Structure probing data (2A3 and DMS) for a 207-nucleotide construct.
High DMS reactivity at an A or C suggests that its Watson-Crick edge is free.
For DMS, 1,516 sequencing reads were counted.
RNA sequence: GGGAACGACUCGAGUAGAGUCGAAAACGGUUACGCCUUCUUUACCGUUAUCAGGGAAGGUACUCGGCCAUGCUAAGGGAAGCAUUAUUCCUUAGGCGCAUGUCGCCGCCAGCAUGGUGUGAGGGGAAAAAGUAUGCUGGGUUCGCCCAGCAUACAAGCCUUUCUUAGUCUUCGGACUAAGAAAGGCAAAAGAAACAACAACAACAAC
Reactivity to 2A3 in 0.01 (KOAc 150mM, MgCl2 10mM, bicine 150mM(pH8.5), 24C), signal-to-noise 3, nucleotides 027 to 156: c020g000g020u040u070a020c060g080c020c010u050u070c030u070u140u080a060c000c020g080u130u050a080u140c060a030g000g020g070a060a000g000g000u040a040c020u010c010g030g000c000c000a010u000g010c000u050a080a080g010g000g000a000a030g050c100a260u130u180a140u030u210c000c000u020u040a010g010g000c000g000c020a140u260g040u230c020g000c020c000g000c020c030a000g040c000a000u010g000g040u070g080u160g060a000g020g010g030g000a020a030a020a020a020g000u010a000u000g000c010u000g000g000g040u020u080c100g110c050c000c000a000g000c000a000u000a000c000a000a000
Reactivity to DMS in 0.01 (KOAc 150mM, MgCl2 10mM, bicine 150mM(pH8.5), 24C), signal-to-noise 1, nucleotides 027 to 156: c050g030g000u000u000a100c040g000c090c040u000u000c070u000u000u000a230c010c040g080u000u000a020u000c120a280g000g000g010a050a040g000g010u000a080c000u000c000g020g010c000c010a010u000g000c020u000a180a140g010g000g020a010a040g030c250a280u000u000a120u000u000c020c000u000u020a100g000g050c000g000c030a120u000g080u000c050g050c000c000g070c150c080a080g030c000a030u000g000g050u000g040u030g030a140g000g000g000g000a040a030a150a100a240g000u000a000u000g000c000u000g030g050g110u000u000c300g030c000c000c040a010g020c000a000u000a000c000a030a130
The reactions ran in a buffer of 150 mM KOAc, 10 mM MgCl2 and 150 mM bicine (pH 8.5), at 24 C.